[RMDB]
RNA sequence: GGGAACGACUCGAGUAGAGUCGAAAAGAUAUGGAGCGUGUCAGGCGGAGAAGGGACUGGGUCGGAAACGACCUUCCUGGAGCCUGGACACGCUCCUAAGUCAAACAGUUCACUUCGGUGAACUGAACAUCGAAACGUCGUUCGCGACGUUUCGAUGAAAAGAAACAACAACAACAAC
Reactivity to DMS in 0.01 (KOAc 150mM, MgCl2 10mM, bicine 150mM(pH8.5), 24C), signal-to-noise 1, nucleotides 027 to 126: g000a020u000a300u000g020g010a010g040c000g020u000g010u060c000a060g000g100c010g020g020a280g000a260a190g000g070g000a060c300u040g050g000g040u000c000g000g000a010a130a240c010g000a000c000c000u000u000c000c000u060g000g000a130g020c000c000u020g070g000a010c020a010c060g020c000u010c000c030u000a000a100g010u000c020a170a150a090c000a000g000u000u000c000a000c000u000u000c300g010g000u000g000a000a000c000u000g030a120a130